Conditions: 150 mM KOAc, 10 mM MgCl2 and 150 mM bicine (pH 8.5), 24 C. An RNA of 207 nucleotides, treated with 2A3 and read out base by base. Reactivities are rounded to 0.1 and cut off at 0 and 3.
RNA sequence: GGGAACGACUCGAGUAGAGUCGAAAAAAUACAGGCUCUCCCAUCCAACUCCUAUUCCAACACGUCCUCGUCGUACAGAGUGGUAACAUGUGUCACCACAUAUCCAAGCUUGGGUACACGGGCAUGAAAAAGUUAGAGCGCUUCGGCGCUCUAACAAGAUAGCUUAAUGCUUCGGCAUUAAGCUAUCAAAAGAAACAACAACAACAAC
Reactivity to 2A3 in 0.01 (KOAc 150mM, MgCl2 10mM, bicine 150mM(pH8.5), 24C), signal-to-noise 2, nucleotides 027 to 156: a000a010u220a010c050a020g070g000c010u000c000u010c020c010c020a030u010c020c010a060a070c030u050c020c000u030a060u090u060c050c030a060a010c050a050c110g040u040c000c000u030c020g070u030c040g000u020a030c040a030g080a050g060u040g020g000u070a060a030c040a110u100g030u030g080u140c050a020c040c010a030c040a040u040a040u020c030c010a050a060g050c050u090u070g100g040g000u000a030c010a000c030g030g010g000c010a030u080g050a010a040a040a030a000g000u000u000a000g000a000g000c010g020c030u030u000c140g060g010c000g000c000u000c000u000a010a000c000a000a010